[RMDB]
RNA sequence: GGGAACGACUCGAGUAGAGUCGAAAACUUGUUUUACAGAGCGCUGAUGAACUCGGCACAAGACCUAAAAUUAGAUCAAGAGUUAAAAAUAUACAAGUGGGUGCGCAUGGAACGGAUGGAUCAGUUUCCGGAAGUGAAGAAAUUUAUUCAAAUGUUAAAUGCUGAUUUUAUUCGUAAAAUCAGCAUUAAAAGAAACAACAACAACAAC
Reactivity to DMS in 0.01 (KOAc 150mM, MgCl2 10mM, bicine 150mM(pH8.5), 24C), signal-to-noise 2, nucleotides 027 to 156: c030u010u000g010u000u000u010u020a140c060a060g020a060g020c010g000c060u000g000a100u000g020a130a120c070u000c020g030g000c020a080c060a060a160g000a040c010c020u000a070a100a090a220u010u000a060g000a030u000c010a110a110g010a120g000u000u000a020a030a070a090a110u000a110u000a090c010a050a090g000u000g010g000g020u000g020c060g020c100a110u010g010g000a080a100c060g010g020a190u000g020g010a040u010c060a140g000u000u000u000c020c030g010g010a080a120g000u000g010a070a070g000a080a090a100u000u000u000a060u020u010c040a030a020a120u000g000u000u000a080
Reactivity to 2A3 in 0.01 (KOAc 150mM, MgCl2 10mM, bicine 150mM(pH8.5), 24C), signal-to-noise 2, nucleotides 027 to 156: c000u000u010g030u040u180u050u100a010c040a030g080a020g000c080g000c030u040g040a070u040g020a120a030c030u000c030g040g000c050a010c020a130a000g060a130c000c010u050a120a100a100a100u180u100a070g010a050u050c070a110a020g020a010g060u030u010a070a100a050a020a080u140a040u060a050c050a080a060g030u060g050g050g010u000g080c030g000c010a060u040g020g000a030a030c080g010g030a020u080g000g040a020u090c000a030g050u050u070u020c000c000g030g020a040a020g070u110g030a010a050g030a000a060a070u160u160u150a060u100u100c050a000a050a210u050g010u140u190a020
Structure probing data (DMS and 2A3) for a 207-nucleotide construct. For 2A3 the reverse transcriptase was SuperScript II with manganese. Values are in units of 0.01, from 0 to 300, in steps of 10. The RNA was probed in 150 mM KOAc, 10 mM MgCl2 and 150 mM bicine (pH 8.5) at 24 C. It was measured as part of the RMDB library OK3TST. The 2A3 profile rests on 824 reads.